[RMDB]
RNA sequence: GGGAACGACUCGAGUAGAGUCGAAAAUUACGCCUUCAUAUCAAGUACAUUUCUAUUCAAUCACCCUUUAACAGGCAUCCAAAUUUCUGUAAUAUAUUUUUCACUUGUAGUAUCACCAUCCUGAUACCGUACCAUUACAAUUCGUUGUAAUGGUACGAAAAGAAACAACAACAACAAC
Reactivity to DMS in 0.01 (KOAc 150mM, MgCl2 10mM, bicine 150mM(pH8.5), 24C), signal-to-noise 4, nucleotides 027 to 126: u010u000a060c100g020c040c010u000u010c060a070u010a060u000c060a050a110g010u020a100c110a060u000u010u000c040u020a060u000u000c040a070a090u010c050a080c030c020c010u010u000u000a080a060c150a060g000g000c070a030u000c050c050a030a100a180u000u010u000c050u000g000u020a050a080u000a130u000a030u010u000u000u010u000c060a080c110u000u000g010u010a080g000u000a010u000c020a080c080c070a070u000c100c090u000g000a060u000a030c090
Reactivity to 2A3 in 0.01 (KOAc 150mM, MgCl2 10mM, bicine 150mM(pH8.5), 24C), signal-to-noise 5, nucleotides 027 to 126: u090u050a050c050g010c010c000u010u070c030a060u050a050u170c050a100a000g050u050a040c020a080u070u130u060c040u100a140u050u100c020a040a070u050c020a070c020c000c000u010u080u070a090a050c060a030g040g010c020a020u040c020c010a100a180a150u080u140u050c040u050g070u090a140a050u120a070u020a120u180u090u010u070u170c040a060c040u030u090g040u060a050g000u010a020u040c010a020c080c020a080u080c030c030u030g000a020u030a050c010